The data come from the RNA Mapping Database (RMDB), library OK3TST. Structure probing data (2A3 and DMS) for a 207-nucleotide construct. The DMS profile rests on 1,784 reads. The RNA was probed in 150 mM KOAc, 10 mM MgCl2 and 150 mM bicine (pH 8.5) at 24 C. The 2A3 profile rests on 408 reads.
RNA sequence: GGGAACGACUCGAGUAGAGUCGAAAACUCGUUAGAGAUAUCACUUAUGACGCCUGUCACGCCUAUGUUGGCGGACGUGUGCAAAUCCAUGUCAACGGCGAUGAAAAAGUGUCCCGACGGAAUGUUGGCGGAAAUUAAAUAUGACGGCGAACGUGUGUCUCCAGUCAUUUUUCGAAAUGACUGGAGAAAAAGAAACAACAACAACAAC
Reactivity to 2A3 in 0.01 (KOAc 150mM, MgCl2 10mM, bicine 150mM(pH8.5), 24C), signal-to-noise 1, nucleotides 027 to 156: c000u010c020g090u180u260a060g020a010g000a030u090a040u260c020a010c020u090u050a040u230g070a030c110g000c030c070u140g010u070c030a010c190g010c030c010u190a210u300g030u030u000g060g000c000g000g000a030c010g000u120g050u000g000c050a090a050a040u010c060c000a010u060g010u010c000a040a000c030g050g030c050g000a030u220g130a060a040a040a000a000g000u020g030u000c000c010c000g040a050c010g000g020a150a080u180g040u020u050g000g030c060g100g070a000a100a000u190u120a010a030a200u280a030u190g020a010c000g000g030c000g000a020a030c030g080u070g000u040g070
Reactivity to DMS in 0.01 (KOAc 150mM, MgCl2 10mM, bicine 150mM(pH8.5), 24C), signal-to-noise 1, nucleotides 027 to 156: c040u010c040g040u020u040a150g010a180g000a110u000a070u000c080a030c040u000u060a120u010g000a080c050g030c000c000u020g000u000c070a080c000g000c000c030u000a220u000g030u000u000g000g070c040g080g000a050c020g040u040g030u010g000c060a080a180a230u000c060c020a060u010g010u020c000a060a120c000g010g000c030g000a100u030g010a040a100a130a040a070g040u010g010u010c000c000c000g020a110c050g010g010a080a140u000g010u000u000g040g000c090g000g000a080a070a190u000u000a040a010a130u010a140u010g000a090c000g000g000c060g040a080a180c070g010u000g000u000g000